[RMDB]
RNA sequence: GGGAACGACUCGAGUAGAGUCGAAAACGAGGUGCUCCUGAAGGAGACGCGCAGCGCCCUCAAGCGGGCCGUGCGCUCACGACAUACGCCCAUCUUCGGGUUCUACGCCGAUCCGCAGCGCUACUGGCGGUGUUCCCCAUUUCGAUGGGGAACACCGAAAAGAAACAACAACAACAAC
Reactivity to 2A3 in 0.01 (KOAc 150mM, MgCl2 10mM, bicine 150mM(pH8.5), 24C), signal-to-noise 1, nucleotides 027 to 126: c030g020a090g050g030u060g010c000u040c080c020u030g060a110a050g060g000a060g050a060c050g000c020g000c020a100g020c020g000c090c060c000u030c100a180a120g080c100g000g000g000c000c000g000u060g020c030g040c000u070c020a050c010g130a040c050a050u230a070c070g040c000c000c000a040u020c020u070u040c000g070g000g000u000u020c010u050a040c040g000c090c020g030a010u020c030c050g000c020a040g120c020g010c040u060a050c070u140g130g000
Reactivity to DMS in 0.01 (KOAc 150mM, MgCl2 10mM, bicine 150mM(pH8.5), 24C), signal-to-noise 2, nucleotides 027 to 126: c040g030a110g020g020u000g000c050u010c060c030u010g010a130a200g000g020a030g000a160c240g010c010g010c050a090g000c190g030c000c000c010u000c150a140a100g020c300g000g040g010c020c070g040u000g020c050g030c030u020c120a000c090g000a180c100a120u000a080c250g000c020c000c030a090u010c100u000u010c040g000g000g000u000u000c050u000a030c070g020c050c000g020a090u000c020c000g000c050a070g020c150g010c020u020a080c060u000g010g010
The record gives the reactivity of an RNA of 177 nucleotides to 2A3 and DMS. Conditions: 150 mM KOAc, 10 mM MgCl2 and 150 mM bicine (pH 8.5), 24 C. The 2A3 profile rests on 1,266 reads. DMS adducts were read by reverse transcription with MarathonRT. The DMS profile rests on 853 reads.